[RMDB]
This 177-nucleotide RNA was probed chemically with 2A3 and DMS. For 2A3, 5,813 sequencing reads were counted. For DMS, 3,830 sequencing reads were counted. Source: RMDB library TTRDES, as collected in RNAgym. The RNA was probed in 150 mM KOAc, 10 mM MgCl2 and 150 mM bicine (pH 8.5) at 24 C. For 2A3 the reverse transcriptase was SuperScript II with manganese.

RNA sequence: GGGAACGACUCGAGUAGAGUCGAAAAAGAUAUGGAGAAUAGCAAGCGCCGAAACUUCAACAGCAGGCUUCGGAAACGAAGCCUGACAUGAAGAGAUAGCUGCGUGAUGACCUAUUCUCCUAAGUCACAUACUCACCAUGUUCGCAUGGUGAGUAUGAAAAGAAACAACAACAACAAC
Reactivity to 2A3 in 0.01 (KOAc 150mM, MgCl2 10mM, bicine 150mM(pH8.5), 24C), signal-to-noise 3, nucleotides 027 to 126: a000g050a060u060a060u110g000g000a000g010a030a000u010a010g000c040a300a110g020c030g030c030c050g050a100a070a070c010u030u000c020a140a130c030a180g080c010a010g000g000c000u000u000c000g010g010a060a040a050c020g000a000a010g000c010c000u000g000a000c010a100u060g000a010a000g060a010g060a100u150a130g140c190u080g000c020g000u050g070a300u170g030a030c000c010u010a010u010u010c010u000c000c000u000a080a010g020u010c010a000
Reactivity to DMS in 0.01 (KOAc 150mM, MgCl2 10mM, bicine 150mM(pH8.5), 24C), signal-to-noise 5, nucleotides 027 to 126: a070g010a050u000a300u000g000g010a030g000a030a020u000a020g000c040a130a140g010c010g020c010c060g000a130a140a100c000u000u000c000a050a120c240a160g000c010a020g000g010c000u000u010c000g010g000a100a110a180c000g000a010a010g000c000c000u000g000a010c090a210u010g000a020a050g020a040g000a110u000a120g020c190u000g030c010g030u000g000a110u010g010a120c300c000u000a010u000u010c010u000c000c010u000a010a090g000u000c030a140